[RMDB]
RNA sequence: GGGAACGACUCGAGUAGAGUCGAAAAUAUCCUGCGUUCGCGCAGGAUACAGCACAAAACUCGGAGGGCGCGCACUCGGAGACAAAACAAAAUGCGAAGCAAGUGAGCUUAGAUUCGUCUAAGCUAACCCUUGAAUCAGAUUCGUCUGAUUCAAGGGAAAAGAAACAACAACAACAAC
Reactivity to DMS in 0.01 (KOAc 150mM, MgCl2 10mM, bicine 150mM(pH8.5), 24C), signal-to-noise 2, nucleotides 027 to 126: u010a000u000c000c000u000g010c010g010u000u030c230g020c010g020c000a000g000g000a000u000a010c080a060g080c100a060c110a070a060a170a130c020u000c030g020g000a030g000g000g000c050g000c020g010c020a040c020u000c070g000g030a030g000a110c190a050a060a060a080c160a050a050a060a080u000g000c030g000a070a140g000c080a080a130g010u000g000a010g000c000u000u000a010g000a060u000u020c300g000u000c000u010a000a000g010c000u010a060a080
Reactivity to 2A3 in 0.01 (KOAc 150mM, MgCl2 10mM, bicine 150mM(pH8.5), 24C), signal-to-noise 3, nucleotides 027 to 126: u050a000u000c000c010u010g000c010g020u010u020c240g000c010g010c110a000g000g000a000u010a000c000a000g060c020a020c020a100a160a150a070c010u030c030g070g020a020g010g050g000c040g000c010g010c030a040c020u010c010g020g020a040g040a030c060a020a110a010a020c080a030a060a020a010u100g020c010g060a050a030g050c050a090a010g090u130g200a010g000c000u010u000a000g010a010u030u060c130g010u050c100u020a000a000g000c000u040a080a070
Structure probing data (DMS and 2A3) for a 177-nucleotide construct. For 2A3, 3,673 sequencing reads were counted. For 2A3 the reverse transcriptase was SuperScript II with manganese.